[RMDB]
RNA sequence: GGGAACGACUCGAGUAGAGUCGAAAAUCACUGUUUCUUAUAGCGGUGGUUUAAACAGAGGUGCAAACAGCAAGUGAAUCUCGUCGCCUUUGCGGGGCUGUGGCCAUGCCCCUCAAAGGAAAUUUGGCGGACCAUUUGUCUUCGGACAAAUGGUCCGAAAAGAAACAACAACAACAAC
Reactivity to 2A3 in 0.01 (KOAc 150mM, MgCl2 10mM, bicine 150mM(pH8.5), 24C), signal-to-noise 1, nucleotides 027 to 126: u000c000a000c000u000g080u000u010u030c170u190u300a200u300a160g000c040g040g000u000g000g220u000u000u030a010a060a000c000a000g130a050g000g140u240g040c040a090a120a120c040a060g060c020a050a000g000u060g020a000a010u000c040u020c060g010u000c050g050c000c000u010u000u000g000c010g000g000g000g020c000u000g000u040g110g100c100c000a030u060g000c000c070c030c040u010c040a020a020a000g020g120a010a010a010u220u170u050g040g040
An RNA of 177 nucleotides, treated with 2A3 and read out base by base. The data come from the RNA Mapping Database (RMDB), library RFM100. Conditions: 150 mM KOAc, 10 mM MgCl2 and 150 mM bicine (pH 8.5), 24 C.